[RMDB]
RNA sequence: GGGAACGACUCGAGUAGAGUCGAAAAGAGGCGAAAUAAUUCCCAUCUCCUAUGUACGGCCGGAGAUGGGUCUGGCCGUACUAAUAAGCCUCAUAGUGACGAGAGUCACGAAUUCUGGAUAGCCUGUGGUAGUCGGCUAUCCUGUGACUACCGUAGAACCAUAUGGUCAUUUCGAUGACCAUAUGGUAAAAGAAACAACAACAACAAC
Reactivity to DMS in 0.01 (KOAc 150mM, MgCl2 10mM, bicine 150mM(pH8.5), 24C), signal-to-noise 3, nucleotides 027 to 156: g000a020g010g030c020g000a080a080a170u000a070a210u000u010c000c020c010a180u000c010u010c040c020u000a080u010g010u000a030c000g040g000c000c030g030g000a050g020a160u000g030g030g000u000c010u000g010g030c000c020g000u010a120c010u000a040a090u000a120a190g020c000c000u000c000a140u000a110g000u000g030a050c010g000a180g000a170g020u010c000a020c020g000a130a120u000u010c210u000g020g010a070u010a030g020c030c020u010g070u010g000g010u000a100g010u000c240g010g010c020u000a010u000c020c010u000g010u010g000a060c010u000a000c010c030g020u000a140g000a080
Reactivity to 2A3 in 0.01 (KOAc 150mM, MgCl2 10mM, bicine 150mM(pH8.5), 24C), signal-to-noise 3, nucleotides 027 to 156: g010a010g000g000c030g060a090a040a080u200a020a100u110u030c010c010c000a020u050c060u040c000c030u140a090u140g000u000a010c010g000g010c020c010g040g000a060g050a120u300g130g000g050u000c000u000g000g000c010c010g000u000a000c000u010a010a020u060a020a000g010c000c000u010c000a030u080a030g150u170g050a010c040g040a020g010a010g190u010c000a000c010g020a030a050u200u110c080u110g000g010a000u000a000g000c010c030u080g020u090g120g110u140a090g150u150c040g000g000c000u000a000u000c000c000u000g000u010g000a010c000u050a130c010c010g030u010a030g080a060